[RMDB]
Description: An RNA of 177 nucleotides, treated with DMS and 2A3 and read out base by base.
RNA sequence: GGGAACGACUCGAGUAGAGUCGAAAAGAUAUGGAAUGAGAUAGCUGAGCGAUAAGAAGCUCGGAAACGAGGCUUCUUUUGACGCUCCGAAACAUUCCUAAGUCAAAGACUUGCUUCGGCAAGUCAAUCUUACUUGUUGGUUCGCCAACAAGUAAGAAAAAGAAACAACAACAACAAC
Reactivity to DMS in 0.01 (KOAc 150mM, MgCl2 10mM, bicine 150mM(pH8.5), 24C), signal-to-noise 4, nucleotides 027 to 126: g010a030u000a300u010g000g000a030a010u000g000a090g010a120u000a160g030c220u000g000a010g020c000g010a160u000a020a020g010a010a010g010c010u000c000g000g000a050a030a150c000g010a010g010g010c000u000u000c000u000u000u010u010g010a180c060g010c000u000c000c030g000a100a210a090c020a020u000u010c000c000u000a050a140g020u000c030a090a140a080g000a020c000u000u000g010c010u000u020c180g020g000c010a010a000g000u000c000a020a060
Reactivity to 2A3 in 0.01 (KOAc 150mM, MgCl2 10mM, bicine 150mM(pH8.5), 24C), signal-to-noise 2, nucleotides 027 to 126: g000a000u060a030u200g010g040a020a000u030g010a150g120a300u190a060g100c210u090g020a010g000c020g000a020u020a100a000g010a010a000g000c000u000c030g010g040a050a020a010c000g000a020g240g070c000u040u000c000u000u070u030u070g050a050c010g000c000u000c020c000g040a070a090a000c010a010u000u000c000c000u010a160a020g050u060c060a110a030a110g010a010c000u010u000g010c000u030u070c300g090g020c000a010a010g000u000c000a000a010